[RMDB]
RNA sequence: GGGAACGACUCGAGUAGAGUCGAAAAUAUGAUGGAGGAUCCUUCUUCACUCCUGAUGGAAAACGGUUGAUCUUCCGUGCCAGCCGUCCAAAGAAUGAAACUGAAAUCGCAAAGUAUAAGAAGCUUAACUGACUGAGGUGUUCGCACCUCAGUCAGUAAAAGAAACAACAACAACAAC
Reactivity to DMS in 0.01 (KOAc 150mM, MgCl2 10mM, bicine 150mM(pH8.5), 24C), signal-to-noise 1, nucleotides 027 to 126: u000a080u000g010a140u010g020g010a150g010g000a080u000c070c100u010u020c060u000u060c060a070c070u020c000c010u000g000a170u000g010g000a070a060a140a050c190g010g000u000u000g000a140u000c060u020u010c070c080g140u010g020c060c040a050g020c000c000g000u040c000c050a070a120a030g000a020a000u020g000a120a060a110c140u000g000a050a120a000u020c040g000c120a140a030a060g010u000a020u000a050a040g010a080a070g000c120u000u000a090
Conditions: 150 mM KOAc, 10 mM MgCl2 and 150 mM bicine (pH 8.5), 24 C.
This 177-nucleotide RNA was probed chemically with DMS.
For DMS, 533 sequencing reads were counted.
For DMS the reverse transcriptase was MarathonRT.
Reactivities are given for positions 27 through 126.